[RMDB]
RNA sequence: GGGAACGACUCGAGUAGAGUCGAAAAAGCAGAUGGAAAGCAUCAGAGGGUUGAUAUAUUUGCAUCAUUGGCAAUAUUCAUUGGAAUAAUGGUUUCCCAAUAUGGCUAUCCUAUGCUAGACCCAAUACCUCAGCCUAGCUUUCGAGCUAGGCUGAGGAAAAGAAACAACAACAACAAC
Reactivity to 2A3 in 0.01 (KOAc 150mM, MgCl2 10mM, bicine 150mM(pH8.5), 24C), signal-to-noise 2, nucleotides 027 to 126: a030g060c030a020g020a160u300g010g000a030a000a000g010c000a090u180c050a070g070a060g030g010g010u000u200g090a050u110a020u030a060u180u170u170g060c090a020u060c020a120u220u300g070g060c000a000a000u070a040u020u080c010a020u000u100g070g140a160a040u030a200a080u130g240g010u010u060u000c000c000c040a040a000u050a030u010g000g000c000u010a020u040c000c000u000a000u000g000c000u000a050g080a080c000c010c010a000a030u130a200